[RMDB]
This 177-nucleotide RNA was probed chemically with DMS and 2A3. Values are in units of 0.01, from 0 to 300, in steps of 10.
RNA sequence: GGGAACGACUCGAGUAGAGUCGAAAAAAUGGUUGUGGCUAAUCAGGGGACAUAGCUGCAAUUAGAAGUCUCCAAAGACGUAGUUUGUCAUGGAUCUGUUACUGCAGUCUUUAAGGGUUCCCUGUGGAUUACUUAGGCGUUUCGACGCCUAAGUAAUAAAAGAAACAACAACAACAAC
Reactivity to DMS in 0.01 (KOAc 150mM, MgCl2 10mM, bicine 150mM(pH8.5), 24C), signal-to-noise 2, nucleotides 027 to 126: a080a060u010g020g020u010u000g010u030g010g010c000u000a080a130u010c020a040g000g000g000g010a030c050a100u000a060g000c000u010g000c010a030a030u000u000a080g010a110a080g000u000c180u010c010c070a040a070a100g010a010c010g020u000a140g000u020u010u000g020u000c010a130u000g000g010a050u000c070u000g000u010u010a040c100u000g010c000a050g010u020c030u000u000u010a090a130g030g010g010u000u000c000c010c010u000g010u000g030g010
Reactivity to 2A3 in 0.01 (KOAc 150mM, MgCl2 10mM, bicine 150mM(pH8.5), 24C), signal-to-noise 1, nucleotides 027 to 126: a000a000u160g080g000u020u020g000u000g060g000c040u070a070a140u120c020a000g000g000g000g000a000c000a000u050a020g040c000u000g050c000a030a010u020u000a030g080a140a000g080u020c010u060c120c020a060a070a040g020a000c020g020u090a140g090u130u170u220g020u050c030a050u010g020g010a020u000c030u080g030u160u020a020c020u010g010c030a030g060u090c020u080u140u060a080a020g120g070g020u000u010c020c050c000u010g020u020g000g020
2A3 adducts were read by reverse transcription with SuperScript II with manganese. Conditions: 150 mM KOAc, 10 mM MgCl2 and 150 mM bicine (pH 8.5), 24 C.